[RMDB]
RNA sequence: GGGAACGACUCGAGUAGAGUCGAAAAAUAAAAUAAAUAAAGUCCCAAUGGGGUCCUCUUCGGAGCGACCCAAGCACAACAGCAGGCUUCGGCUGGGACCAUCGCGAGCGUACGUGGGCAAAAUAAAGUAUAUAUCAUAUUUCGAUAUGAUAUAUACAAAAGAAACAACAACAACAAC
Reactivity to DMS in 0.01 (KOAc 150mM, MgCl2 10mM, bicine 150mM(pH8.5), 24C), signal-to-noise 2, nucleotides 027 to 126: a110u070a030a030a060a060u060a090a070a160u010a070a140a290g010u020c000c000c000a040a090u010g090g010g010g010u000c000c000u000c000u000u070c110g040g000a020g030c150g020a040c010c010c000a010a040g070c040a060c100a100a100c140a040g010c000a050g010g000c040u000u030c090g020g010c000u060g000g030g000a040c050c070a060u000c100g020c080g040a050g020c050g000u020a000c070g000u000g000g010g030c060a080a030a060a030u020a080a070a190
Reactivity to 2A3 in 0.01 (KOAc 150mM, MgCl2 10mM, bicine 150mM(pH8.5), 24C), signal-to-noise 3, nucleotides 027 to 126: a000u150a030a020a010a010u200a040a080a030u180a090a160a000g050u000c060c000c000a020a100u120g020g010g000g020u000c000c000u000c030u020u130c240g140g000a000g010c100g010a000c000c000c000a020a000g030c010a030c040a130a060c020a030g050c000a010g080g040c030u010u050c050g070g000c020u050g040g000g030a010c020c000a010u060c020g020c020g040a040g040c030g040u030a010c020g010u030g020g030g010c040a000a020a030a090u190a050a100a000

This 177-nucleotide RNA was probed chemically with DMS and 2A3. The reactions ran in a buffer of 150 mM KOAc, 10 mM MgCl2 and 150 mM bicine (pH 8.5), at 24 C. It was measured as part of the RMDB library OK1LIB. For DMS, 1,924 sequencing reads were counted. For 2A3 the reverse transcriptase was SuperScript II with manganese.